[RMDB]
RNA sequence: GGGAACGACUCGAGUAGAGUCGAAAAUAUGCCUGCUGGACUCAUUCCUGCGGUUAUGAUUAUGUCUACAACCCUUUCUUUGUCGAUGUUCAACAGUGGGGUUAUGUAGGCAAUCUUGCUACUAAUCACCUACGAUAAACUUCGGUUUAUCGUAGGUAAAAGAAACAACAACAACAAC
Reactivity to 2A3 in 0.01 (KOAc 150mM, MgCl2 10mM, bicine 150mM(pH8.5), 24C), signal-to-noise 4, nucleotides 027 to 126: u160a070u070g050c000c000u040g000c020u050g000g000a010c020u030c130a070u140u030c010c010u010g010c010g010g020u100u090a050u120g030a020u010u120a070u220g000u000c000u000a020c000a020a040c000c020c000u010u270u070c010u030u090u020g020u030c060g200a210u190g120u200u060c020a020a030c020a060g020u010g020g010g000g020u000u030a060u090g000u000a000g000g000c000a000a000u010c010u010u080g030c010u030a100c020u060a060a070u110c030
Reactivity to DMS in 0.01 (KOAc 150mM, MgCl2 10mM, bicine 150mM(pH8.5), 24C), signal-to-noise 3, nucleotides 027 to 126: u020a070u020g010c010c010u000g030c050u000g000g020a030c220u010c170a110u010u000c000c000u000g010c030g000g010u000u000a020u000g010a040u010u000a060u010g010u000c010u000a010c000a030a040c020c000c000u000u000u000c050u010u000u000g020u000c060g010a190u010g000u020u010c020a020a020c100a010g010u000g000g000g010g000u000u000a070u020g020u000a010g020g010c010a010a030u000c020u000u010g010c050u010a080c100u000a090a090u000c150